[RMDB]
Chemical mapping of a 177-nucleotide RNA with DMS and 2A3. Source: RMDB library OK1LIB, as collected in RNAgym. Reactivities are given for positions 27 through 126.

RNA sequence: GGGAACGACUCGAGUAGAGUCGAAAACCCUCGGUGAGGGCGAACCCGAAGCCGAGGCAUCGGCGCACACCGCCGCCGAAUGGCAGCCAGGUGUUGGGUGCCACGCUGCCGUCAAGGAACCGGCUAGCCGGUCGGGACUAUUCGUAGUCCCGACCGGAAAAGAAACAACAACAACAAC
Reactivity to DMS in 0.01 (KOAc 150mM, MgCl2 10mM, bicine 150mM(pH8.5), 24C), signal-to-noise 1, nucleotides 027 to 126: c030c000c000u000c010g000g000u030g000a300g000g000g000c070g060a060a110c020c000c000g020a160a110g000c000c000g000a100g000g000c040a180u000c010g000g000c030g000c110a020c150a060c090c060g000c210c000g040c030c020g000a070a240u060g000g000c000a080g030c000c150a190g040g030u020g000u000u000g070g000g000u040g000c060c010a050c260g000c030u000g000c000c000g000u000c190a110a120g000g000a090a140c070c000g000g000c050u000a150g020
Reactivity to 2A3 in 0.01 (KOAc 150mM, MgCl2 10mM, bicine 150mM(pH8.5), 24C), signal-to-noise 3, nucleotides 027 to 126: c000c010c000u000c030g100g020u220g000a070g100g040g000c160g080a230a210c000c000c010g010a050a050g000c000c010g000a020g000g000c020a070u100c020g010g010c010g010c050a030c040a070c060c030g050c020c000g020c000c000g060a110a080u080g000g000c010a000g020c050c080a090g040g080u140g180u300u160g090g070g030u100g000c010c000a020c150g010c000u000g000c000c010g000u060c040a070a150g080g000a110a120c020c000g020g000c000u020a020g020